[RMDB]
RNA sequence: GGGAACGACUCGAGUAGAGUCGAAAAACGGUGCGGAUGGAGUCGAAGUUCAUCAAUGGUUGGGAGGAAGCCAACCAUAUGAAUGCGGUGUUCCUCUCGAACGAGAUUCUGCCGUGGCCGAUCAGCGGUGUUUCUCUACAUUCGUGUAGAGAAACACAAAAGAAACAACAACAACAAC
Reactivity to 2A3 in 0.01 (KOAc 150mM, MgCl2 10mM, bicine 150mM(pH8.5), 24C), signal-to-noise 3, nucleotides 027 to 126: a000c020g000g020u030g000c040g040g060a300u110g020g010a020g000u000c010g030a100a040g000u000u020c020a090u050c030a080a160u170g190g040u110u140g040g020g030a060g040g010a030a010g000c010c000a030a030c020c010a020u040a050u130g180a130a030u090g030c070g000g040u060g260u080u040c000c000u020c000u020c050g010a000a000c000g000a000g000a000u020u000c000u010g010c000c000g010u010g160g030c000c010g010a080u100c040a010g110c060g090
Reactivity to DMS in 0.01 (KOAc 150mM, MgCl2 10mM, bicine 150mM(pH8.5), 24C), signal-to-noise 3, nucleotides 027 to 126: a120c030g010g000u000g010c000g000g000a100u010g010g000a020g040u010c000g010a150a180g000u000u000c010a130u010c190a130a070u000g000g000u000u010g000g000g000a070g010g040a050a250g000c000c000a050a100c140c050a010u010a040u010g000a070a090u010g040c170g020g030u000g000u000u000c010c020u000c030u010c030g010a000a020c010g000a300g000a030u000u000c010u000g010c010c020g020u010g010g020c000c020g000a090u000c110a080g000c190g020